Annotation
Chemical mapping of a 177-nucleotide RNA with 2A3 and DMS. The 2A3 profile rests on 654 reads. The RNA was probed in 150 mM KOAc, 10 mM MgCl2 and 150 mM bicine (pH 8.5) at 24 C.
RNA sequence: GGGAACGACUCGAGUAGAGUCGAAAAAGGCUAUUUGUUCUGGAGAUAUUUCAGCCUGGAAAUGAGUGUAUGGGGUGUUUUAAGCAGAACACAUGAUAGGAAUAUGUAUCAUUACAGGUUGUGUGCCGAUUUUAGCGCCAUUCGUGGCGCUAAAAUCAAAAGAAACAACAACAACAAC
Reactivity to 2A3 in 0.01 (KOAc 150mM, MgCl2 10mM, bicine 150mM(pH8.5), 24C), signal-to-noise 1, nucleotides 027 to 126: a000g140g000c110u090a130u170u000u090g170u000u000c030u010g110g010a070g060a100u100a170u110u050u020c010a010g050c000c000u040g000g050a050a050a040u030g000a040g040u050g000u020a010u070g040g090g000g000u000g000u000u010u000u030a200a010g060c170a080g010a000a000c000a000c000a020u190g090a170u090a070g110g070a070a000u050a000u100g130u050a090u080c000a000u020u020a000c000a000g000g000u010u050g000u000g010u000g100c080c000
Reactivity to DMS in 0.01 (KOAc 150mM, MgCl2 10mM, bicine 150mM(pH8.5), 24C), signal-to-noise 2, nucleotides 027 to 126: a090g010g000c020u010a070u000u000u010g000u020u000c020u020g020g000a150g020a070u030a100u080u010u010c010a000g030c000c000u000g000g010a120a010a040u000g000a000g010u000g000u000a000u000g000g020g000g040u000g000u000u000u000u000a090a240g000c270a200g010a000a000c000a000c000a090u050g000a100u000a140g010g010a080a030u000a000u050g010u000a020u000c010a000u000u000a120c080a000g000g030u000u010g010u000g000u030g030c050c030